Chemical mapping of a 177-nucleotide RNA with DMS. For DMS, 1,866 sequencing reads were counted. Source: RMDB library TTRDEL, as collected in RNAgym. Values are in units of 0.01, from 0 to 300, in steps of 10.
[RMDB]
RNA sequence: GGGAACGACUCGAGUAGAGUCGAAAAGAUAUGGAUCUGAGGCUAGAGCUCUGUUCGGAAACGAACAAGAGCUCUUGGACCCUCAGAGUCCUAAGUCAAAACAUGACACAGUUCGCUGUGUCAUGAACGAGAUAUAUGCCUUCGGGCAUAUAUCUCGAAAAGAAACAACAACAACAAC
Reactivity to DMS in 0.01 (KOAc 150mM, MgCl2 10mM, bicine 150mM(pH8.5), 24C), signal-to-noise 2, nucleotides 027 to 126: g000a010u000a010u020g000g000a110u000c000u000g000a020g010g020c000u000a000g000a010g020c000u000c000u000g010u000u000c000g030g000a000a010a020c000g000a010a010c000a000a050g000a020g020c000u010c000u000u000g000g020a020c300c010c000u010c000a010g000a030g010u000c000c000u000a000a140g010u010c000a070a100a130a300c010a010u000g000a010c000a000c000a000g000u010u010c220g020c000u030g010u000g010u000c010a000u000g000a020a100
Values cover nucleotides 27 to 126.